[RMDB]
RNA sequence: GGGAACGACUCGAGUAGAGUCGAAAAGUUAUCCUCGCAAGAAUUUGCCCGGUAGCGUAUAAGCAAAACACAAAUCUAUCCAUGCAAGCAUUUACCGCUGGUGAACCGGCGGUUUUUUUUGCCUGCCUAAACUGUCAAGUUUCGACUUGACAGUUUAAAAAGAAACAACAACAACAAC
Reactivity to 2A3 in 0.01 (KOAc 150mM, MgCl2 10mM, bicine 150mM(pH8.5), 24C), signal-to-noise 2, nucleotides 027 to 126: g030u040u060a070u120c020c010u020c010g010c020a050a040g080a120a200u050u030u140g030c000c010c000g070g020u030a020g020c030g050u130a100u040a170a020g030c030a030a070a090a020c090a020c030a030a090a050u050c040u070a080u050c030c020a010u090g020c010a000a030g000c010a010u050u020u040a010c020c000g000c000u010g000g050u240g090a160a200c020c010g020g000c000g000g000u010u000u000u020u000u000u030u100g010c000c000u000g000c000c010
Reactivity to DMS in 0.01 (KOAc 150mM, MgCl2 10mM, bicine 150mM(pH8.5), 24C), signal-to-noise 4, nucleotides 027 to 126: g000u030u010a060u000c020c000u000c270g030c070a070a070g010a100a140u010u000u000g010c010c060c100g000g020u000a060g000c020g000u020a080u020a080a120g000c100a040a070a070a090c120a060c130a030a060a040u000c060u030a100u010c060c090a070u000g010c020a030a070g000c040a030u000u000u020a020c010c020g000c000u010g000g030u030g010a120a160c040c010g010g010c010g000g000u000u000u000u010u000u000u000u000g000c000c010u010g000c010c200